Conditions: 150 mM KOAc, 10 mM MgCl2 and 150 mM bicine (pH 8.5), 24 C.
An RNA of 177 nucleotides, treated with 2A3 and DMS and read out base by base.
DMS adducts were read by reverse transcription with MarathonRT.
Values cover nucleotides 27 to 126.
RNA sequence: GGGAACGACUCGAGUAGAGUCGAAAAGAUAUGGACCCAGAAGGGAGCGAUUGGUCGGAAACGACCACUCGCAUCGAUCUUCGGGUCCUAAGUCAAAGUGUUUACGGACUUCGGUCCGUAAACACAAUCUAAUGAUAUAGUUCGCUAUAUCAUUAGAAAAAGAAACAACAACAACAAC
Reactivity to 2A3 in 0.01 (KOAc 150mM, MgCl2 10mM, bicine 150mM(pH8.5), 24C), signal-to-noise 4, nucleotides 027 to 126: g010a000u010a000u030g000g000a010c010c000c040a030g000a010a010g030g010g010a040g000c000g020a010u010u010g000g010u000c000g010g000a000a000a000c000g000a000c000c000a000c010u010c000g020c000a020u300c010g010a010u000c000u000u010c010g000g010g010u000c000c000u000a000a000g010u000c030a040a140a130g010u000g000u000u000u000a000c010g000g010a010c020u060u130c300g070g000u000c000c000g000u000a000a000a000c000a000c000a000a010
Reactivity to DMS in 0.01 (KOAc 150mM, MgCl2 10mM, bicine 150mM(pH8.5), 24C), signal-to-noise 6, nucleotides 027 to 126: g000a010u000a010u020g000g000a010c000c000c000a130g020a010a010g010g000g000a020g040c000g010a020u000u000g000g010u000c000g030g000a010a010a020c000g010a020c000c000a010c160u000c000g020c010a220u010c240g000a040u010c000u000u000c000g000g000g010u000c000c000u000a000a060g000u000c000a140a130a160g020u000g010u000u000u000a010c010g000g000a020c000u000u010c240g040g010u000c000c000g000u000a000a000a010c000a000c010a050a080